[RMDB]
RNA sequence: GGGAACGACUCGAGUAGAGUCGAAAAGAUAUGGAACGACCUUUUGACGCGACCAAAUCGGAAACGAUUUCCCUCGCGAUAAGGCGUUCCUAAGUCAAACCAAAUUAUAGUUCGCUAUAAUUUGGAACUAGAGCUAAUGGUUCGCCAUUAGCUCUAGAAAAGAAACAACAACAACAAC
Reactivity to DMS in 0.01 (KOAc 150mM, MgCl2 10mM, bicine 150mM(pH8.5), 24C), signal-to-noise 3, nucleotides 027 to 126: g000a020u000a300u000g010g000a000a010c000g000a160c020c000u000u000u010u010g000a160c060g020c000g020a030c110c180a000a010a000u000c000g010g000a080a060a100c000g000a020u000u000u000c130c100c150u000c000g020c040g000a080u000a000a010g000g010c000g010u000u000c000c000u000a010a060g000u000c030a130a120a200c010c000a010a010a000u000u000a000u000a000g000u000u010c250g020c010u000a010u010a000a010u000u020u000g010g020a050a150
Reactivity to 2A3 in 0.01 (KOAc 150mM, MgCl2 10mM, bicine 150mM(pH8.5), 24C), signal-to-noise 3, nucleotides 027 to 126: g010a010u040a040u050g010g020a000a020c020g300a300c010c010u090u080u050u180g300a180c090g000c010g010a030c100c050a000a020a020u000c010g000g000a020a020a030c010g010a000u010u010u030c030c030c000u030c010g000c030g070a040u020a040a010g010g000c000g000u000u000c000c000u000a040a010g020u000c010a070a020a150c010c000a000a010a000u000u000a000u000a020g040u030u050c250g000c160u000a010u000a000a020u000u000u000g010g010a050a000
Source: RMDB library TTRDEL, as collected in RNAgym. This 177-nucleotide RNA was probed chemically with DMS and 2A3. Reactivities are rounded to 0.1 and cut off at 0 and 3. DMS adducts were read by reverse transcription with MarathonRT. Values cover nucleotides 27 to 126. For DMS, 2,467 sequencing reads were counted. The RNA was probed in 150 mM KOAc, 10 mM MgCl2 and 150 mM bicine (pH 8.5) at 24 C.